This 177-nucleotide RNA was probed chemically with DMS and 2A3. For 2A3, 1,917 sequencing reads were counted. The DMS profile rests on 2,950 reads. DMS adducts were read by reverse transcription with MarathonRT.
[RMDB]
RNA sequence: GGGAACGACUCGAGUAGAGUCGAAAAUCAAGCCGCCUCGGAGGACGAAGGAGUGGCAGGGCCUCCAGGUCCGCUAUUCGACCACAUGCCUUUUGGAGAUGAUCAUGGCCGGGCCGGGGAAGCGAAGCAUUUUGCCUUAGUUCGCUAAGGCAAAAUGAAAAGAAACAACAACAACAAC
Reactivity to DMS in 0.01 (KOAc 150mM, MgCl2 10mM, bicine 150mM(pH8.5), 24C), signal-to-noise 4, nucleotides 027 to 126: u000c060a070a090g010c010c210g010c030c010u010c020g010g010a120g000g010a130c060g010a140a070g000g010a060g050u000g000g010c030a070g040g010g000c020c010u010c130c220a180g020g010u010c010c010g010c100u000a030u010u010c110g010a100c020c010a050c040a090u010g010c030c010u000u010u000u020g030g000a070g000a130u010g020a060u000c080a100u010g000g000c050c050g030g000g010c030c000g000g000g000g000a050a060g010c030g000a100a110g010
Reactivity to 2A3 in 0.01 (KOAc 150mM, MgCl2 10mM, bicine 150mM(pH8.5), 24C), signal-to-noise 2, nucleotides 027 to 126: u050c010a030a000g050c000c000g040c030c000u020c030g040g020a070g030g050a030c030g030a050a060g090g030a030g020u130g050g000c060a060g050g020g000c010c000u040c050c020a040g030g000u000c000c010g000c020u060a080u050u140c070g020a100c020c040a020c000a070u230g030c010c000u090u120u090u300g090g000a130g010a070u160g020a020u100c040a080u110g000g000c110c030g050g070g000c000c020g000g020g000g020a030a020g030c050g060a040a000g030

Reactivities are rounded to 0.1 and cut off at 0 and 3.